This 177-nucleotide RNA was probed chemically with DMS and 2A3.
It was measured as part of the RMDB library VIROID.

RNA sequence: GGGAACGACUCGAGUAGAGUCGAAAAGAUCCGAGGGGCCCAACUACCAAGUUUGGAGAGCACUCCGGCCGAAGGGUCGAGGUACCCAGAAUGAGGAAUCCUCACGGAGAAAAGCAGACAAAUCACCCAAACAUAAUAGGUUCGCCUAUUAUGUUUGAAAAGAAACAACAACAACAAC
Reactivity to DMS in 0.01 (KOAc 150mM, MgCl2 10mM, bicine 150mM(pH8.5), 24C), signal-to-noise 5, nucleotides 027 to 126: g010a110u000c020c010g020a080g020g000g000g030c140c030c050a100a090c100u000a160c090c070a050a220g010u000u000u000g010g000a130g010a090g010c060a040c010u000c010c030g010g010c000c010g010a140a120g020g020g030u000c020g000a040g010g000u010a050c020c010c000a130g010a040a060u010g010a280g010g000a180a080u010c020c010u000c030a120c060g000g000a030g000a070a060a070a070g000c060a050g000a060c070a040a040a060u010c080a100c110c060
Reactivity to 2A3 in 0.01 (KOAc 150mM, MgCl2 10mM, bicine 150mM(pH8.5), 24C), signal-to-noise 3, nucleotides 027 to 126: g040a060u000c020c010g010a050g020g010g010g010c020c020c020a000a050c050u140a150c010c040a080a040g000u010u050u060g100g000a130g010a030g070c040a040c070u010c020c040g020g000c000c000g050a090a050g100g010g000u010c020g010a080g000g030u060a050c000c000c030a020g170a050a070u160g010a060g060g010a020a060u080c000c000u020c000a020c010g040g000a050g070a030a140a010a010g010c050a000g050a110c030a030a080a030u100c010a090c010c030
The RNA was probed in 150 mM KOAc, 10 mM MgCl2 and 150 mM bicine (pH 8.5) at 24 C. For 2A3 the reverse transcriptase was SuperScript II with manganese. The DMS profile rests on 4,085 reads. 2A3 is a SHAPE reagent: it acylates the 2'-hydroxyl of flexible nucleotides of all four kinds.